[RMDB]
Structure probing data (DMS and 2A3) for a 177-nucleotide construct. The RNA was probed in 150 mM KOAc, 10 mM MgCl2 and 150 mM bicine (pH 8.5) at 24 C. It was measured as part of the RMDB library M2PK50.
RNA sequence: GGGAACGACUCGAGUAGAGUCGAAAAGGGUGAUCGUUCGCGAUCACCCAAAGAAGCACGAAACGCCAAGAAAUCCCCGAACAUUGGUAUGGAAGCCUGAGAAAACUGACAAGUUCGCUUGUCAGAACUUAUGCCUAUUCUUCGGAAUAGGCAUAAGAAAAGAAACAACAACAACAAC
Reactivity to DMS in 0.01 (KOAc 150mM, MgCl2 10mM, bicine 150mM(pH8.5), 24C), signal-to-noise 4, nucleotides 027 to 126: g010g000g010u000g010a000u000c010g020u000u010c230g030c020g010a010u000c000a000c000c000c000a000a030a040g010a100a090g000c060a050c060g010a080a080a110c100g000c000c030a040a060g000a040a120a130u000c010c010c010c090g010a070a080c110a090u000u000g000g000u010a110u000g010g010a110a100g010c020c050u000g010a170g000a070a070a090a110c000u000g000a010c000a000a000g010u000u010c190g000c010u000u000g000u010c010a000g010a030a110
Reactivity to 2A3 in 0.01 (KOAc 150mM, MgCl2 10mM, bicine 150mM(pH8.5), 24C), signal-to-noise 1, nucleotides 027 to 126: g020g000g000u000g000a000u000c030g000u040u030c110g010c000g100a000u000c000a000c010c000c010a000a020a020g000a010a010g030c060a000c060g100a060a140a030c110g000c000c020a010a030g060a070a230a130u110c060c000c000c000g030a030a010c020a110u030u070g000g020u080a100u110g010g050a100a040g020c000c020u070g030a070g060a050a100a030a040c000u010g000a000c000a010a020g000u040u090c150g070c090u000u000g000u020c000a000g000a000a000